This 207-nucleotide RNA was probed chemically with 2A3. The RNA was probed in 150 mM KOAc, 10 mM MgCl2 and 150 mM bicine (pH 8.5) at 24 C.

[RMDB]
RNA sequence: GGGAACGACUCGAGUAGAGUCGAAAAGGGGUCUCGUGGAGUCUCUCCUGUGGAGCUUGGAUUUAACAGCUGAAGCCUCCACGGCUGUUUGUCAGCUCCACCUGAGAGACCCACGAGACGGAGGCACCCAAAAGCAGCUAGAUUCGUCUAGCUGCAACUACUAAGCGACUUUCGAGUCGCUUAGUAGAAAAGAAACAACAACAACAAC
Reactivity to 2A3 in 0.01 (KOAc 150mM, MgCl2 10mM, bicine 150mM(pH8.5), 24C), signal-to-noise 1, nucleotides 027 to 156: g110g020g050g000u000c010u010c000g000u030g000g050a240g030u000c010u020c010u010c020c060u030g010u010g000g000a020g000c060u160u150g230g020a160u300u300u170a020a000c000a010g020c010u050g050a140a040g020c070c020u000c000c040a010c020g010g000c000u000g000u010u010u010g040u040c020a010g010c000u010c000c000a000c000c000u000g000a000g000a000g000a000c010c000c010a000c010g000a000g000a000c010g010g000a000g000g020c040a090c000c030c000a000a080a000a110g010c010a000g010c000u000a000g000a040u050u120c100g010u000c140u000a000g000c000u000g000c000a000a000